[RMDB]
RNA sequence: GGGAACGACUCGAGUAGAGUCGAAAAAUCGCCGGCGGCCACCAGUGCGGGGUCCAGCGGGAUCUGACCCAGCAGCGGCACGUCGGCGCCGACCGCACGCGACAACCGCUCGGCGACCAGCCGGCCAAUCUGUCAUUACUUUCGAGUAAUGACAGAUAAAAGAAACAACAACAACAAC
Reactivity to 2A3 in 0.01 (KOAc 150mM, MgCl2 10mM, bicine 150mM(pH8.5), 24C), signal-to-noise 4, nucleotides 027 to 126: a000u040c010g000c000c010g010g010c020g010g030c030c030a040c030c050a130g090u010g050c010g000g010g010g010u040c220c080a040g070c110g140g100g000a070u050c020u030g060a070c000c000c010a010g070c010a000g130c040g040g000c050a040c180g060u050c020g020g010c000g000c000c010g010a030c010c010g020c020a030c040g090c030g060a060c040a120a090c030c010g010c080u140c050g010g000c000g010a050c010c020a010g020c000c000g010g000c010c010a040
Reactivity to DMS in 0.01 (KOAc 150mM, MgCl2 10mM, bicine 150mM(pH8.5), 24C), signal-to-noise 7, nucleotides 027 to 126: a090u000c050g030c000c010g010g020c010g000g000c020c030a080c110c290a170g020u000g010c020g010g010g000g010u000c060c080a060g010c090g010g010g010a120u010c020u000g000a050c010c010c010a090g020c020a070g010c090g000g010c020a060c040g010u000c030g010g010c010g010c050c020g000a100c030c010g010c070a050c050g010c040g000a100c100a080a100c050c070g000c050u000c030g020g010c020g000a080c090c060a100g000c030c010g000g000c040c170a060
Description:
Chemical mapping of a 177-nucleotide RNA with 2A3 and DMS. Reactivities are given for positions 27 through 126. For DMS the reverse transcriptase was MarathonRT. 2A3 is a SHAPE reagent: it acylates the 2'-hydroxyl of flexible nucleotides of all four kinds.